[RMDB]
RNA sequence: GGGAACGACUCGAGUAGAGUCGAAAACUAUCUUGCAUUCACCCUCUCGCUGAACAAGUCAUAGUGAUAACACACUCUGGCCGAAAAGGGCGUUAUGCCGUGGAACCCUACCAUGGAAAAGUAGUGGCAAUUCAUCUCGGUUCGCCGAGAUGAAUUGAAAAGAAACAACAACAACAAC
Reactivity to DMS in 0.01 (KOAc 150mM, MgCl2 10mM, bicine 150mM(pH8.5), 24C), signal-to-noise 2, nucleotides 027 to 126: c030u000a030u010c060u000u000g000c010a050u000u000c050a060c020c000c000u000c120u000c040g010c150u000g050a080a080c190a080a110g030u000c010a020u000a030g000u000g000a070u000a080a100c250a150c030a020c010u000c030u000g010g000c010c050g000a050a050a070a080g000g010g010c040g010u000u010a020u010g020c010c030g050u000g000g000a050a120c050c010c040u000a050c010c030a040u000g030g010a110a100a060a060g010u000a030g000u020g010g000
Reactivity to 2A3 in 0.01 (KOAc 150mM, MgCl2 10mM, bicine 150mM(pH8.5), 24C), signal-to-noise 2, nucleotides 027 to 126: c010u000a060u120c060u000u070g040c000a010u030u050c020a030c010c010c000u040c000u010c010g080c060u090g040a110a030c050a120a050g000u020c000a020u030a010g030u020g030a050u040a210a050c060a010c000a000c060u030c020u000g020g030c030c000g030a060a060a050a020g010g030g000c010g010u000u150a070u130g010c000c000g010u010g050g000a050a080c010c010c000u000a040c020c000a020u050g100g080a030a130a060a000g030u030a020g030u090g050g000
Structure probing data (DMS and 2A3) for a 177-nucleotide construct. The DMS profile rests on 1,905 reads. The 2A3 profile rests on 2,300 reads.